[RMDB]
RNA sequence: GGGAACGACUCGAGUAGAGUCGAAAAAUACACAGUUCGCUGUGUAUAGGCGAGCCGGCUUAGCUCAGUUGGUUAGAGCGCUAGAUUGUGGAUCUAGAGGUCCUCGGUUCGAGCCCGAGAGCUGGUACCAAGUUGAUCGAUUAUUCGUAAUCGAUAAUCCCGUUAAUGAGUUCGCUCAUUAACGGGAAAAAGAAACAACAACAACAAC
Reactivity to DMS in 0.01 (KOAc 150mM, MgCl2 10mM, bicine 150mM(pH8.5), 24C), signal-to-noise 2, nucleotides 027 to 156: a050u000a000c000a010c000a020g010u000u000c300g090c040u020g040u020g010u010a010u000a060g000g020c050g010a250g000c020c010g020g010c010u000u000a130g010c020u000c050a060g010u000u000g010g000u010u010a070g010a070g040c050g000c020u010a040g010a010u000u000g060u000g040g020a070u000c010u000a060g010a090g010g000u000c000c000u000c020g000g020u000u000c070g000a300g010c120c030c000g000a080g010a020g010c010u000g000g000u010a100c010c010a000a300g000u000u000g010a000u000c010g010a030u000u010a050u010u010c280g040u000a020a010u000c000g010a070u000a050a210
Reactivity to 2A3 in 0.01 (KOAc 150mM, MgCl2 10mM, bicine 150mM(pH8.5), 24C), signal-to-noise 1, nucleotides 027 to 156: a000u010a000c000a000c000a000g040u130u150c170g020c150u000g000u000g030u000a010u030a020g040g010c090g070a000g020c020c000g000g010c010u040u050a000g000c000u000c010a130g100u300u270g150g110u220u230a000g000a000g000c000g000c000u000a000g000a000u070u180g170u260g300g110a010u000c000u000a000g000a000g010g000u060c000c000u000c000g000g000u000u000c000g000a000g000c000c000c030g000a010g000a000g000c010u010g000g000u010a020c000c000a070a020g080u090u100g030a020u010c000g000a000u000u000a010u050u180c190g050u080a020a000u000c000g000a000u040a010a050